RNA sequence: GGGAACGACUCGAGUAGAGUCGAAAACACGGAGCCGUGACGUGCAACCCAGGGUGCGCGUCGUUCAGGACACGGACCUGAAUUGGCGGAACCGUCGGAGUGUCCGUGACCCACUUCGCGAGUGGACGGAGGUGCGGACCUUCGGGUUCGUACUUCCAAAAGAAACAACAACAACAAC
Reactivity to 2A3 in 0.01 (KOAc 150mM, MgCl2 10mM, bicine 150mM(pH8.5), 24C), signal-to-noise 9, nucleotides 027 to 126: c020a000c000g010g000a010g010c010c000g040u090g010a000c000g000u020g000c010a030a050c000c000c050a080g110g050g000u020g010c020g000c000g000u000c000g000u030u020c010a010g000g030a020c010a010c050g020g050a020c000c000u000g030a030a030u060u140g040g000c000g000g010a040a050c040c000g020u040c030g040g050a140g030u110g060u000c000c000g000u010g030a040c010c010c000a010c010u110u110c080g020c050g070a030g030u050g020g020a050c070
Reactivity to DMS in 0.01 (KOAc 150mM, MgCl2 10mM, bicine 150mM(pH8.5), 24C), signal-to-noise 9, nucleotides 027 to 126: c070a040c020g000g010a170g010c010c010g010u010g000a010c000g030u000g000c020a030a080c030c040c100a140g010g000g030u000g000c010g010c010g000u000c000g010u010u010c060a030g000g000a160c020a030c060g000g010a040c010c000u000g000a040a130u030u030g010g020c010g000g000a100a080c040c010g010u010c070g010g000a100g010u010g000u000c000c000g010u000g000a200c110c000c010a040c030u010u020c090g000c060g000a100g000u010g000g000a170c180

Conditions: 150 mM KOAc, 10 mM MgCl2 and 150 mM bicine (pH 8.5), 24 C. An RNA of 177 nucleotides, treated with 2A3 and DMS and read out base by base. 2A3 adducts were read by reverse transcription with SuperScript II with manganese. For DMS the reverse transcriptase was MarathonRT.